[RMDB]
RNA sequence: GGGAACGACUCGAGUAGAGUCGAAAAAAAUGGAAUACCGCAACAGCUUGAGUCAGUAUCUCAGCCUGUUGUUCCAAAGAGGCUGCCGCUGCUGACGCUUCUUGUACUAAAGAGGCGUUUUGCUGUGCCUCAUAUCGCCUUUCGAGGCGAUAUGAGGAAAAGAAACAACAACAACAAC
Reactivity to DMS in 0.01 (KOAc 150mM, MgCl2 10mM, bicine 150mM(pH8.5), 24C), signal-to-noise 2, nucleotides 027 to 126: a040a030a070u000g000g010a110a100u000a120c170c090g010c050a030a020c020a010g000c010u010u000g000a010g000u000c170a240g020u020a120u010c020u000c000a020g020c290c020u030g030u000u000g010u000u010c030c030a050a140a060g010a040g000g000c060u010g040c090c050g010c010u010g000c030u000g000a020c010g000c010u000u000c000u000u000g000u000a150c290u000a030a010a030g000a000g010g000c000g020u010u000u030u000g000c000u010g000u000g020
Reactivity to 2A3 in 0.01 (KOAc 150mM, MgCl2 10mM, bicine 150mM(pH8.5), 24C), signal-to-noise 1, nucleotides 027 to 126: a030a030a020u170g010g040a140a030u150a290c090c130g030c030a000a000c010a010g010c020u040u140g010a000g030u100c140a100g070u190a170u100c010u010c020a010g010c000c000u020g000u030u000g010u050u040c000c000a080a010a080g070a010g080g030c040u060g060c080c080g020c020u000g000c000u010g010a000c000g030c000u000u000c000u000u020g040u070a170c040u200a180a010a000g000a000g000g010c030g000u050u010u060u020g010c010u010g030u020g050